[RMDB]
RNA sequence: GGGAACGACUCGAGUAGAGUCGAAAAGCCUGCUCUGCCAGACUUCAAUCUGGAGGGGCACCCAGUCCUGAAAGCCGAGUAUGAGAGGGUGAAGGCAGGGCAGCCUAUGGCACAGCUUGACACCACGGCUUACUGUCGUGUUCGCACGACAGUAAGCAAAAGAAACAACAACAACAAC
Reactivity to 2A3 in 0.01 (KOAc 150mM, MgCl2 10mM, bicine 150mM(pH8.5), 24C), signal-to-noise 2, nucleotides 027 to 126: g050c010c010u000g020c010u020c020u030g010c000c020a060g030a120c030u090u040c120a060a200u070c050u020g000g030a020g000g020g040g000c000a040c020c020c000a030g050u010c000c000u050g030a160a040a050g090c060c080g110a050g090u220a100u260g160a130g000a020g100g050g010u050g050a100a050g050g010c000a000g050g040g000c000a010g000c000c010u140a200u140g020g010c070a020c030a110g000c000u040u050g010a040c030a020c090c030a050c020g070
Reactivity to DMS in 0.01 (KOAc 150mM, MgCl2 10mM, bicine 150mM(pH8.5), 24C), signal-to-noise 1, nucleotides 027 to 126: g010c200c040u000g000c000u000c020u000g020c000c000a040g020a110c050u020u040c190a130a160u010c090u010g010g000a220g000g010g030g020c010a020c040c060c010a260g000u010c040c020u000g000a170a110a070g020c120c050g020a060g010u000a070u000g000a160g020a120g000g000g040u000g000a210a090g000g000c020a020g000g000g040c000a010g000c050c050u000a080u010g020g020c080a070c060a060g040c050u000u010g000a090c030a080c060c020a140c150g010